An RNA of 177 nucleotides, treated with DMS and 2A3 and read out base by base.
RNA sequence: GGGAACGACUCGAGUAGAGUCGAAAAAGAUAUGGAUACAUUGACGUUACUCGCACAUGAGGGAAGCUCGGAAACGAGCUUCCUACCCACCAUGUGAACUACGAGGAGGAAGGGUAUCCUAAGUCAACCUUAUAACCUAGUUCGCUAGGUUAUAAGGAAAAGAAACAACAACAACAAC
Reactivity to DMS in 0.01 (KOAc 150mM, MgCl2 10mM, bicine 150mM(pH8.5), 24C), signal-to-noise 9, nucleotides 027 to 126: a120g000a030u000a110u010g000g010a020u000a010c010a100u010u000g010a300c110g010u010u010a200c010u000c010g020c010a010c010a000u000g000a150g000g000g000a030a010g010c000u000c000g010g010a030a030a080c000g010a010g000c000u000u000c000c000u000a000c050c040c120a300c060c000a010u000g000u000g010a030a040c110u020a300c040g000a040g010g000a150g000g010a170a170g010g010g030u000a010u000c000c010u000a030a120g000u000c000a090a180
Reactivity to 2A3 in 0.01 (KOAc 150mM, MgCl2 10mM, bicine 150mM(pH8.5), 24C), signal-to-noise 8, nucleotides 027 to 126: a000g020a010u030a010u060g000g000a010u010a010c030a100u050u150g240a040c060g140u240u300a140c010u000c000g030c000a010c000a010u010g010a000g000g000g000a000a000g000c000u000c010g000g000a000a010a000c000g000a000g000c000u000u000c000c000u000a000c000c020c000a030c010c000a010u020g010u000g030a070a040c100u270a060c300g020a020g210g050a080g120g070a080a080g220g030g000u000a000u010c000c010u000a020a000g010u000c020a030a070
Overview
The 2A3 profile rests on 34,641 reads.